Overview
Chemical mapping of a 177-nucleotide RNA with 2A3 and DMS. The data come from the RNA Mapping Database (RMDB), library M2PK90. The RNA was probed in 150 mM KOAc, 10 mM MgCl2 and 150 mM bicine (pH 8.5) at 24 C.

[RMDB]
RNA sequence: GGGAACGACUCGAGUAGAGUCGAAAAUGAAAUAACUUGCAUGCAUAAGACGAGGUAGAGCGCGCGCUCUACCAAAAGAUGUGUGUAAAAACGCACGUGUAGGCGCGGCUACACAAAUAAACAAAAAGACGAAUUUAAUGUUCGCAUUAAAUUCGUCAAAAGAAACAACAACAACAAC
Reactivity to 2A3 in 0.01 (KOAc 150mM, MgCl2 10mM, bicine 150mM(pH8.5), 24C), signal-to-noise 1, nucleotides 027 to 126: u130g000a040a040a110u250a070a040c030u030u030g000c020a030u000g000c020a010u040a140a000g130a050c070g030a050g000g010u000a010g000a010g000c110g000c030g120c130g010c150u000c000u000a000c000c000a000a040a000a000g040a010u000g030u000g010u000g020u040a000a060a000a000a060c000g010c010a060c070g010u010g020u010a000g040g000c090g000c080g250g070c010u020a010c030a000c010a000a040a040u100a040a040a010c080a070a080a000a050a050
Reactivity to DMS in 0.01 (KOAc 150mM, MgCl2 10mM, bicine 150mM(pH8.5), 24C), signal-to-noise 1, nucleotides 027 to 126: u000g000a080a040a140u050a150a080c110u000u000g000c020a010u000g030c030a010u000a100a090g030a150c140g000a080g020g030u000a080g030a040g010c020g000c300g050c300g000c030u000c010u070a000c000c000a020a000a080a130g000a040u030g050u000g100u010g000u000a030a020a180a180a150c100g000c030a090c180g000u030g000u000a050g010g000c040g000c140g070g000c050u000a000c000a000c010a050a040a120u000a050a050a050c040a030a040a090a030a060